[RMDB]
RNA sequence: GGGAACGACUCGAGUAGAGUCGAAAAACUUAGAGGCAAUUUGAAAUAAUUUAAAUUAGCUCAACCCUACUGCACUUACCGAACUAGAUAACGGUGUAGUAGGGGUAAAUUCUCCGCAUUCGGUGCGCAACCACCUGAGGUUUCGACCUCAGGUGAACCCAAAAUAGGGUUUCGACCCUAUUUUGGGAAAAGAAACAACAACAACAAC
Reactivity to 2A3 in 0.01 (KOAc 150mM, MgCl2 10mM, bicine 150mM(pH8.5), 24C), signal-to-noise 1, nucleotides 027 to 156: a010c040u080u060a010g020a030g100g030c010a000a000u000u020u060g070a070a120a140u250a200a190u080u060u120a070a060a010u040u030a020g020c000u040c010a010a010c000c000c000u000a010c000u000g000c020a000c000u000u070a050c060c000g070a140a110c010u050a080g090a210u130a140a060c090g010g030u010g000u010a000g000u000a000g000g020g000g000u000a010a010a010u020u020c040u000c030c020g000c070a060u000u080c030g010g010u000g030c000g000c030a010a080c030c000a000c000c000u000g000a000g070g010u000u100u190c160g080a040c000c000u000c000a010g030g000u000g000a000a000
The record gives the reactivity of an RNA of 207 nucleotides to 2A3.
For 2A3, 828 sequencing reads were counted.
Values cover nucleotides 27 to 156.
2A3 adducts were read by reverse transcription with SuperScript II with manganese.
Values are in units of 0.01, from 0 to 300, in steps of 10.